[RMDB]
RNA sequence: GGGAACGACUCGAGUAGAGUCGAAAACUGGAAGUGCCGUUGGCGAUGCGCGACGGGCUCGGGCUGCGUCUCGAGCUGCGACUGCACGACGCGCGCGACAGCAACGUGCGGGUGGUCGGCGCCCUGCGUCACCUUAGGAUUUCGAUCCUAAGGUGACAAAAGAAACAACAACAACAAC
Reactivity to 2A3 in 0.01 (KOAc 150mM, MgCl2 10mM, bicine 150mM(pH8.5), 24C), signal-to-noise 5, nucleotides 027 to 126: c030u040g060g070a100a090g070u060g100c020c000g030u060u040g080g080c050g070a220u140g040c030g010c010g070a070c030g020g010g010c000u000c010g000g000g000c080u300g100c160g120u120c000u000c010g010a000g000c000u030g000c030g090a070c050u090g000c080a030c090g050a050c020g030c000g000c000g000c010g070a060c030a050g090c000a030a040c020g080u170g030c020g030g020g010u070g020g040u120c060g000g030c050g010c000c000c000u050g020c010
Reactivity to DMS in 0.01 (KOAc 150mM, MgCl2 10mM, bicine 150mM(pH8.5), 24C), signal-to-noise 5, nucleotides 027 to 126: c070u000g000g030a080a130g010u000g010c020c010g000u000u010g020g010c030g010a120u000g000c010g000c010g020a110c030g000g010g000c010u000c010g000g000g010c010u010g020c280g010u010c030u000c010g000a030g020c000u000g010c050g010a100c090u000g010c050a220c060g010a100c040g020c020g010c030g010c020g010a130c140a120g000c030a070a040c040g010u010g010c000g010g000g030u000g000g010u000c050g010g000c100g000c020c020c010u000g000c150
The data come from the RNA Mapping Database (RMDB), library OK2TRN. This 177-nucleotide RNA was probed chemically with 2A3 and DMS. For 2A3, 7,401 sequencing reads were counted. The RNA was probed in 150 mM KOAc, 10 mM MgCl2 and 150 mM bicine (pH 8.5) at 24 C. The DMS profile rests on 9,892 reads.